[RMDB]
Source: RMDB library OK2TST, as collected in RNAgym. An RNA of 177 nucleotides, treated with 2A3 and DMS and read out base by base. The RNA was probed in 150 mM KOAc, 10 mM MgCl2 and 150 mM bicine (pH 8.5) at 24 C. 2A3 is a SHAPE reagent: it acylates the 2'-hydroxyl of flexible nucleotides of all four kinds.
RNA sequence: GGGAACGACUCGAGUAGAGUCGAAAAUGAGACAAGGCCUUGCUCUGUCACUCAGGAUGGAAUACAGUGGCAUGAUUACAGCUCACUGUAACUUUGAACUACUGGGCUCAAGCAAUCCUCCUGCCUCGUCCUAUGCGGAUUUCGAUCCGCAUAGGACAAAAGAAACAACAACAACAAC
Reactivity to 2A3 in 0.01 (KOAc 150mM, MgCl2 10mM, bicine 150mM(pH8.5), 24C), signal-to-noise 1, nucleotides 027 to 126: u160g000a040g020a030c040a090a070g030g020c020c100u030u060g000c010u030c020u030g060u000c010a030c030u000c010a030g010g020a080u250g020g090a100a060u090a030c000a000g000u000g030g000c040a020u100g030a080u180u230a120c060a040g010c020u090c080a090c000u010g000u020a050a010c000u060u100u190g050a120a060c010u090a040c020u080g010g050g000c020u010c040a020a060g000c000a010a030u080c000c000u020c020c010u000g000c000c010u060c040
Reactivity to DMS in 0.01 (KOAc 150mM, MgCl2 10mM, bicine 150mM(pH8.5), 24C), signal-to-noise 2, nucleotides 027 to 126: u000g020a150g030a060c020a030a100g010g030c090c150u000u000g030c000u000c100u020g000u000c080a030c050u000c000a070g050g000a060u000g020g000a070a170u000a010c020a000g010u060g000g000c020a140u000g000a190u010u000a100c220a080g000c060u030c090a040c030u030g000u000a030a110c110u000u020u010g000a060a090c090u020a080c200u000g000g020g030c070u010c050a050a060g010c100a060a100u000c040c030u000c010c020u000g020c020c030u000c130